[RMDB]
RNA sequence: GGGAACGACUCGAGUAGAGUCGAAAAGAUAUGGACGCAGCAACAGCGUGGAUUCGGAAACGAAUUGCACGACAUGCUGGUCCUAAGUCAAAAGCAAAAUCGCGUCGUUCGCGACGCGAUUUUGCAAGAUAUCUCAAUGGUUCGCCAUUGAGAUAUCAAAAGAAACAACAACAACAAC
Reactivity to 2A3 in 0.01 (KOAc 150mM, MgCl2 10mM, bicine 150mM(pH8.5), 24C), signal-to-noise 3, nucleotides 027 to 126: g010a010u060a040u140g000g010a050c070g020c300a010g000c000a000a180c040a220g100c020g000u000g000g010a010u000u000c010g000g050a050a040a020c010g020a000a040u030u300g300c000a000c000g170a080c040a010u050g000c000u010g010g000u010c000c000u000a090a000g020u010c040a100a050a040a050g000c000a010a000a020a020u020c000g000c000g000u030c000g050u080u150c270g010c000g130a000c000g010c000g000a010u010u010u000u010g010c000a000a000
Reactivity to DMS in 0.01 (KOAc 150mM, MgCl2 10mM, bicine 150mM(pH8.5), 24C), signal-to-noise 4, nucleotides 027 to 126: g000a040u010a300u000g000g000a020c000g020c010a010g010c010a030a080c260a180g000c010g010u000g010g000a010u000u000c000g020g010a100a080a150c010g010a010a010u000u000g010c000a010c000g000a090c080a200u000g000c000u000g000g010u000c000c000u000a020a070g000u000c030a070a100a130a140g000c000a010a010a010a000u000c000g010c000g000u010c000g020u000u010c250g020c020g010a010c000g020c000g000a000u000u000u000u000g000c000a020a030

This 177-nucleotide RNA was probed chemically with 2A3 and DMS. The DMS profile rests on 5,377 reads. Values are in units of 0.01, from 0 to 300, in steps of 10. 2A3 is a SHAPE reagent: it acylates the 2'-hydroxyl of flexible nucleotides of all four kinds. The reactions ran in a buffer of 150 mM KOAc, 10 mM MgCl2 and 150 mM bicine (pH 8.5), at 24 C. For DMS the reverse transcriptase was MarathonRT. Source: RMDB library TTRDEL, as collected in RNAgym.